[RMDB]
RNA sequence: GGGAACGACUCGAGUAGAGUCGAAAACAAAGUACACAGGUACAAGUACAAGUACAAGUACAGGGAACCAAAGUGCAUUAGAAGCUGCGGAGCCCAGACAUGGGAACUAUUUUCACGCUCAGUUGCAAUCUGUCAAUGCCGUUCGCCACACCGAGUAAAAAUCGAAAAUCUUCGGAUUUUCGAUUUUAAAAGAAACAACAACAACAAC
Reactivity to 2A3 in 0.01 (KOAc 150mM, MgCl2 10mM, bicine 150mM(pH8.5), 24C), signal-to-noise 3, nucleotides 027 to 156: c010a020a100a030g030u060a010c090a020c040a070g000g120u030a030c030a080a110g050u100a080c090a090a070g000u000a040c040a070a030g000u020a010c040a060g010g020g020a010a000c030c020a030a110a000g050u050g030c030a020u050u110a110g060a230a020g010c040u090g010c020g030g040a040g030c020c000c020a040g060a020c050a050u030g010g000g010a040a050c010u050a090u120u130u080u100c070a030c030g040c000u030c030a090g020u070u050g070c030a070a170u050c020u050g070u080c030a020a010u060g020c000c000g030u030u090c040g020c090c030a050c020a010c120c020g020a020g110u160a050
Reactivity to DMS in 0.01 (KOAc 150mM, MgCl2 10mM, bicine 150mM(pH8.5), 24C), signal-to-noise 2, nucleotides 027 to 156: c040a040a080a110g030u000a070c020a120c070a170g000g010u000a040c040a120a120g040u010a090c070a070a150g040u030a090c080a130a240g020u000a050c010a120g030g020g020a090a090c060c040a040a110a100g000u010g000c040a080u000u000a060g010a060a120g000c010u010g010c030g000g010a150g010c030c020c050a060g010a110c120a070u000g020g000g020a070a090c070u000a100u010u000u010u020c020a070c040g020c000u010c060a100g010u000u010g010c040a000a110u010c080u040g000u000c030a040a060u000g010c010c000g020u000u010c080g010c020c040a080c050a030c140c030g030a130g000u000a040